[RMDB]
Structure probing data (DMS) for a 177-nucleotide construct. The RNA was probed in 150 mM KOAc, 10 mM MgCl2 and 150 mM bicine (pH 8.5) at 24 C. It was measured as part of the RMDB library OK2TST.
RNA sequence: GGGAACGACUCGAGUAGAGUCGAAAAGGGAUCGGGCCCUCCUGGACGACCGGCACCUCUCCCCCGGCCGGAAGUUCCUCGAUGCAGACCUCCUGGGGAUCCCGUACCGUAUCCUCCUCACCCAGGAGCUAUAGGGGAACUUCGGUUCCCCUAUAGCAAAAGAAACAACAACAACAAC
Reactivity to DMS in 0.01 (KOAc 150mM, MgCl2 10mM, bicine 150mM(pH8.5), 24C), signal-to-noise 2, nucleotides 027 to 126: g000g000g000a130u020c030g020g000g000c020c030c040u000c030c060u000g000g000a070c010g030a300c010c010g000g000c070a090c120c120u020c140u010c000c000c000c020c140g010g000c030c010g040g030a020a210g000u000u000c010c020u010c110g020a100u000g010c120a130g000a100c260c050u000c000c000u000g020g000g010g000a110u000c020c000c010g010u000a080c100c060g020u000a060u000c060c040u010c010c020u000c110a170c020c000c010a040g000g000a040